[RMDB]
RNA sequence: GGGAACGACUCGAGUAGAGUCGAAAACUCAAAGACUGGCAGCGUUGGGCGACACAGCCUGGGACUUUGGCUCUAUUGGAGGGGUUUUCAACUCCAUAGGGAAAGCCGUUCACCAAGUGUUUGGUGGCGGAUAGAGACAUUUCGAUGUCUCUAUCCGAAAAGAAACAACAACAACAAC
Reactivity to 2A3 in 0.01 (KOAc 150mM, MgCl2 10mM, bicine 150mM(pH8.5), 24C), signal-to-noise 3, nucleotides 027 to 126: c000u010c000a030a050a000g080a050c070u080g050g020c010a030g010c090g120u140u110g020g020g050c030g050a040c030a010c020a130g010c020c020u020g010g030g020a030c020u030u050u070g040g000c000u020c000u030a070u020u150g030g000a020g010g020g000g000u010u050u080u240c010a000a050c000u020c020c030a040u070a050g020g000g040a040a040a020g050c010c000g050u090u040c020a040c030c010a050a040g170u070g130u300u080u040g010g000u010g040g010
Reactivity to DMS in 0.01 (KOAc 150mM, MgCl2 10mM, bicine 150mM(pH8.5), 24C), signal-to-noise 4, nucleotides 027 to 126: c030u000c030a060a090a090g010a120c040u010g010g000c050a080g010c060g030u000u000g020g010g010c020g010a120c120a070c110a080g020c020c020u000g010g010g000a080c080u000u010u000g010g010c010u000c010u010a040u010u000g020g010a030g000g000g000g000u000u020u000u000c070a070a070c030u000c010c020a030u010a050g000g000g000a080a080a060g000c020c020g010u000u010c020a030c010c000a030a090g020u010g000u000u000u000g010g010u000g010g020